Background: This 170-nucleotide RNA was probed chemically with 2A3. It was measured as part of the RMDB library 15KLIB. For 2A3 the reverse transcriptase was SuperScript II with manganese.
RNA sequence: GGGAACGACUCGAGUAGAGUCGAAAAGUUGUCUGUGGUGGAAAACGUACGUUUUAUAUCACAGCAAAUGGCGGUAUUUCAUUCUGUCGUAGGCAUAAUUGGAAUUGUGUGGAUUGUGACACUGCAGCGAGGCCAGACUUCGGUCUGGCCAAAAGAAACAACAACAACAAC
Reactivity to 2A3 in 0.01 (KOAc 150mM, MgCl2 10mM, bicine 150mM(pH8.5), 24C), signal-to-noise 2, nucleotides 027 to 129: g050u000u000g040u120c000u000g030u030g000g010u000g110g030a000a000a000a000c000g180u210a050c100g020u070u000u000u000a020u000a000u000c000a000c020a000g000c000a040a040a030u100g010g000c000g000g020u040a120u010u240u050c010a040u000u010c100u120g030u070c000g050u000a010g060g000c000a060u040a080a030u170u030g050g080a130a100u130u020g010u010g000u050g130g060a030u050u100g020u000g000a030c000a000c050u030g000c020a000g010c020g020a000
The reactions ran in a buffer of 150 mM KOAc, 10 mM MgCl2 and 150 mM bicine (pH 8.5), at 24 C.